[RMDB]
RNA sequence: GGGAACGACUCGAGUAGAGUCGAAAACUAAGACGCUUCGGCGUCUUAGAAAUCCUAAGUCUAUCUGUUAUUGACGCAUCGAUCUCUCGGAAACGAGAGGGAGCGUUCAAUAACAACAAGGAUAGAUAUGGAAAAGAACUGCGGUUCGCCGCAGUUCCAAAAGCAUAUCGUUCGCGAUAUGCUUUUGAAAAGAAACAACAACAACAAC
Reactivity to 2A3 in 0.01 (KOAc 150mM, MgCl2 10mM, bicine 150mM(pH8.5), 24C), signal-to-noise 3, nucleotides 027 to 156: c000u000a000a000g010a000c000g000c010u020u080c180g130g000c000g010u000c000u000u000a000g000a010a000a010u020c010c000u010a140a030g030u000c000u000a010u000c050u190g000u020u000a000u000u000g010a000c000g030c060a260u300c070g090a100u040c000u000c000u000c000g040g050a140a150a090c000g000a000g000a010g010g010g000a010g000c000g060u150u040c010a000a010u000a000a000c000a010a020c040a070a110g110g000a000u000a000g000a000u040a080u100g070g020a030a100a070a070g000a000a010c000u010g000c020g010g080u030u070c210g060c060c000g000c000a000g000u000u000c000
Reactivity to DMS in 0.01 (KOAc 150mM, MgCl2 10mM, bicine 150mM(pH8.5), 24C), signal-to-noise 3, nucleotides 027 to 156: c000u000a010a020g020a030c010g020c010u000u010c280g080g060c000g010u000c000u010u000a000g000a020a080a100u000c010c010u010a100a240g000u000c010u000a010u000c000u000g000u000u000a020u000u000g020a030c020g010c010a280u000c130g010a070u010c000u000c000u010c000g000g000a160a140a300c000g000a030g020a030g000g010g020a030g060c000g000u010u010c010a030a010u000a010a000c010a130a110c210a180a250g020g010a020u000a010g010a020u000a210u000g020g000a080a100a150a110g010a030a010c010u000g020c000g020g030u000u000c300g020c040c000g030c000a020g010u010u000c000